[RMDB]
The record gives the reactivity of an RNA of 207 nucleotides to 2A3 and DMS.
RNA sequence: GGGAACGACUCGAGUAGAGUCGAAAAGCUCCUUUGCGCUUUUUUUUCGGAUUAGGCGUGGAGGCGAAAGUCACCCUCCUCGCAUCGCAAGUUCGUGCUUCCGACUUACACGUAGGGCGAGGGGUGGAAAACAGUAUGGGAUUCGUCCCAUACUGAACUGAUAAUAAUUCUUCGGAAUUAUUAUCAGAAAAGAAACAACAACAACAAC
Reactivity to 2A3 in 0.01 (KOAc 150mM, MgCl2 10mM, bicine 150mM(pH8.5), 24C), signal-to-noise 7, nucleotides 027 to 156: g020c030u040c010c000u010u010u020g000c010g020c020u080u030u030u010u010u010u050u120c200g110g040a050u060u060a040g010g010c000g000u020g010g010a000g010g010c060g060a140a070a020g110u120c060a040c020c000c000u000c000c010u000c010g000c030a060u060c020g020c070a050a060g030u130u120c030g030u080g100c080u160u080c050c030g050a030c010u030u070a040c060a020c080g110u110a100g070g030g020c000g000a010g010g010g020g010u200g020g030a050a090a010a020c000a000g000u000a000u000g000g000g010a010u020u090c140g060u010c030c000c000a000u000a000c000u000g000a030a010
Reactivity to DMS in 0.01 (KOAc 150mM, MgCl2 10mM, bicine 150mM(pH8.5), 24C), signal-to-noise 3, nucleotides 027 to 156: g010c090u000c010c010u000u010u000g010c000g020c000u000u000u000u000u000u000u000u000c240g030g000a060u010u000a030g010g010c000g010u000g000g010a030g010g030c090g000a080a050a080g010u000c040a070c010c000c000u000c010c000u000c000g030c050a100u000c070g000c040a040a040g010u000u000c020g020u000g010c130u010u010c050c020g030a080c020u000u000a040c030a060c070g010u000a130g020g010g010c040g000a030g010g000g000g010u000g010g000a030a070a090a170c000a010g020u000a010u000g010g010g010a080u000u000c300g020u000c000c000c000a000u000a000c000u000g010a020a100
Source: RMDB library M2RFPK, as collected in RNAgym. The RNA was probed in 150 mM KOAc, 10 mM MgCl2 and 150 mM bicine (pH 8.5) at 24 C. For 2A3 the reverse transcriptase was SuperScript II with manganese. The 2A3 profile rests on 8,152 reads. For DMS, 11,702 sequencing reads were counted.